Structure probing data (DMS and 2A3) for a 177-nucleotide construct.
2A3 adducts were read by reverse transcription with SuperScript II with manganese.
It was measured as part of the RMDB library OK2TST.
The reactions ran in a buffer of 150 mM KOAc, 10 mM MgCl2 and 150 mM bicine (pH 8.5), at 24 C.
Values cover nucleotides 27 to 126.
RNA sequence: GGGAACGACUCGAGUAGAGUCGAAAACAACGAAGAUUUCCAUUUCUGCGGCAAUGAAUCGGGCGAAGCCAGCCCCUAUUGCAGCUACCAUUCGCGCCUGGCUUUCCAGCCGACAGCCGAACGCCGAUGAUUAUUUAUUAUUCGUAAUAAAUAAUCAAAAAGAAACAACAACAACAAC
Reactivity to DMS in 0.01 (KOAc 150mM, MgCl2 10mM, bicine 150mM(pH8.5), 24C), signal-to-noise 4, nucleotides 027 to 126: c120a070a130c100g010a120a110g010a160u000u000u000c020c020a140u010u000u000c060u020g040c030g000g000c020a080a050u010g000a090a070u000c120g000g000g010c100g000a060a070g020c060c070a080g020c040c010c010c060u010a030u010u000g010c050a070g010c050u000a080c130c060a080u000u000c060g000c080g010c080c020u000g010g010c030u000u000u010c090c110a170g000c050c020g000a040c080a100g000c050c050g020a110a060c120g000c070c060g010a140
Reactivity to 2A3 in 0.01 (KOAc 150mM, MgCl2 10mM, bicine 150mM(pH8.5), 24C), signal-to-noise 2, nucleotides 027 to 126: c040a020a050c070g130a090a080g030a210u070u060u040c010c020a040u070u080u060c100u140g030c000g040g000c020a040a090u090g040a090a050u110c050g030g010g000c050g080a040a030g030c040c030a030g000c000c030c000c020u090a040u190u120g000c020a040g000c010u090a100c040c030a080u080u160c060g000c010g000c050c000u000g000g000c000u080u010u040c040c020a100g050c020c000g020a040c030a020g030c000c010g020a060a020c100g070c060c030g120a060